[RMDB]
RNA sequence: GGGAACGACUCGAGUAGAGUCGAAAAGAUAUGGAAUCCGUGGUCAGCAACAGCUCGGAAACGAGACAUGCUGCCACAGGAUUCCUAAGUCACUACCCUCGAUACGGGUUCGCCCGUAUCGAGGGAACAUCUAACCGGAGUUCGCUCCGGUUAGAUGAAAAGAAACAACAACAACAAC
Reactivity to DMS in 0.01 (KOAc 150mM, MgCl2 10mM, bicine 150mM(pH8.5), 24C), signal-to-noise 3, nucleotides 027 to 126: g010a060u010a300u010g000g000a010a000u000c000c000g010u000g000g010u000c020a020g020c000a010a080c280a160g000c000u000c000g000g000a070a090a170c010g000a020g000a040c100a190u000g000c000u000g000c010c010a000c020a040g040g000a020u000u000c000c000u000a010a070g000u000c030a190c090u010a150c000c000c000u000c000g000a020u000a010c000g000g000g010u000u010c260g010c000c020c000g020u000a000u010c000g010a000g000g000g010a010a010
Reactivity to 2A3 in 0.01 (KOAc 150mM, MgCl2 10mM, bicine 150mM(pH8.5), 24C), signal-to-noise 4, nucleotides 027 to 126: g000a030u080a050u160g000g000a000a000u000c000c000g010u010g010g030u300c110a000g020c000a020a150c020a200g060c000u010c020g030g040a080a060a050c020g010a000g010a050c020a060u070g000c000u000g000c000c000a000c000a010g000g000a000u000u020c010c000u000a010a010g040u000c010a040c170u210a170c020c010c000u000c000g000a000u000a000c000g010g030g090u040u070c300g080c030c010c000g010u000a000u000c000g010a000g000g000g000a010a010